[RMDB]
RNA sequence: GGGAACGACUCGAGUAGAGUCGAAAAAAAAAGAUAUGGAAGCUAUGGAGCAAGAGCGCUUCGUGCGAACUCGGAAACGAGGAGGUAUACGAAGCCCUUGCGUUGAAAUAGCUUCCUAAGUCAAAAACCUUGAGAGUAUGUUCGCAUACUCUCAAGGAAAAGAAACAACAACAACAAC
Reactivity to DMS in 0.01 (KOAc 150mM, MgCl2 10mM, bicine 150mM(pH8.5), 24C), signal-to-noise 1, nucleotides 027 to 126: a010a040a020a030a010g010a030u020a300u010g000g010a040a010g000c000u000a010u000g000g000a040g010c000a010a020g000a070g020c180g020c000u010u000c000g040u000g000c030g000a100a250c010u000c000g000g010a110a110a100c010g040a020g000g020a060g030g000u010a080u010a020c000g000a000a000g000c000c030c000u000u000g000c000g000u000u000g000a090a050a000u000a020g000c010u000u000c010c000u010a010a080g000u020c010a060a100a130a120a090

Background:
Chemical mapping of a 177-nucleotide RNA with DMS. Values cover nucleotides 27 to 126.